Notes
An RNA of 207 nucleotides, treated with 2A3 and read out base by base.
RNA sequence: GGGAACGACUCGAGUAGAGUCGAAAACAGACUAGCUCUCGGAAGGCCCGCCCGCAGGCAAGAAGAUGAGUGAAACCAUAAAUAUGCAGGCUACGCUCGUAGACGCUUAAGUAAUCGAUGUUUCUGGACGUGGGUUCGACUCCCACCGUCUCCAUACGACUGAAUACAAGUUCGCUUGUAUUCAGUCAAAAGAAACAACAACAACAAC
Reactivity to 2A3 in 0.01 (KOAc 150mM, MgCl2 10mM, bicine 150mM(pH8.5), 24C), signal-to-noise 1, nucleotides 027 to 156: c020a000g100a040c020u040a020g000c000u000c000u000c020g000g040a020a000g010g010c010c000c000g000c000c020c010g000c040a010g020g000c000a000a010g070a020a000g010a000u090g010a010g020u050g010a060a030a000c050c020a090u190a160a030a010u060a010u020g000c000a030g010g020c000u020a020c050g050c040u040c070g170u100a020g040a100c040g040c020u150u100a100a040g050u060a110a180u130c150g090a110u080g000u010u000u020c000u010g000g010a000c020g000u000g000g000g060u030u050c030g040a030c050u040c010c000c000a020c040c050g020u000c010u000c060c010a090u090a170c080

It was measured as part of the RMDB library ARCHII. The 2A3 profile rests on 1,306 reads. For 2A3 the reverse transcriptase was SuperScript II with manganese.